[RMDB]
An RNA of 207 nucleotides, treated with 2A3 and DMS and read out base by base.
High 2A3 reactivity points to a flexible backbone, as in loops and unpaired stretches.
The 2A3 profile rests on 3,182 reads.
2A3 adducts were read by reverse transcription with SuperScript II with manganese.
DMS (dimethyl sulfate) methylates the pairing face of unpaired adenines and cytosines.
RNA sequence: GGGAACGACUCGAGUAGAGUCGAAAAUAGAUGGUGGCUGGGACUGGAGUCAUCUGAAGGCUCAACUGGGCUGGGUAUCUAAGAUGGCUUCUUCACUCACAUGUCUGGCACUUCAGUCCUCUUCCAUAUGGCCUCUCUCCAGCAGAACAGCCUUGACAAAACGUACCAUUUUCGAAUGGUACGUUUUAAAAGAAACAACAACAACAAC
Reactivity to 2A3 in 0.01 (KOAc 150mM, MgCl2 10mM, bicine 150mM(pH8.5), 24C), signal-to-noise 4, nucleotides 027 to 156: u230a030g090a040u080g040g110u030g010g020c030u020g020g040g020a060c020u030g020g010a010g030u050c040a070u020c100u070g070a100a030g030g000c020u050c110a040a150c110u130g000g020g000c020u010g060g000g020u070a040u080c030u030a010a030g000a040u010g020g020c000u070u020c000u070u070c090a110c040u100c010a070c000a050u120g020u040c020u010g050g020c020a020c050u130u110c040a050g000u030c000c000u050c050u080u050c010c030a090u080a130u270g050g010c020c000u020c010u010c000u020c010c010a050g000c040a020g050a060a000c020a000g010c020c000u000u050g040a050c090
Reactivity to DMS in 0.01 (KOAc 150mM, MgCl2 10mM, bicine 150mM(pH8.5), 24C), signal-to-noise 3, nucleotides 027 to 156: u000a120g000a080u000g010g000u000g000g000c040u010g030g030g020a070c060u010g010g000a060g020u000c020a060u010c060u010g010a100a080g010g010c030u000c050a040a070c040u010g040g040g040c030u000g020g020g000u000a050u000c040u010a090a060g010a070u000g000g030c050u010u000c060u010u020c050a100c060u000c060a080c070a100u020g000u000c030u000g020g020c060a080c030u010u000c020a060g040u000c020c030u010c020u010u000c030c060a160u000a090u010g010g030c030c010u000c030u000c020u010c030c020a050g020c040a100g000a060a090c030a090g000c020c000u010u000g010a150c190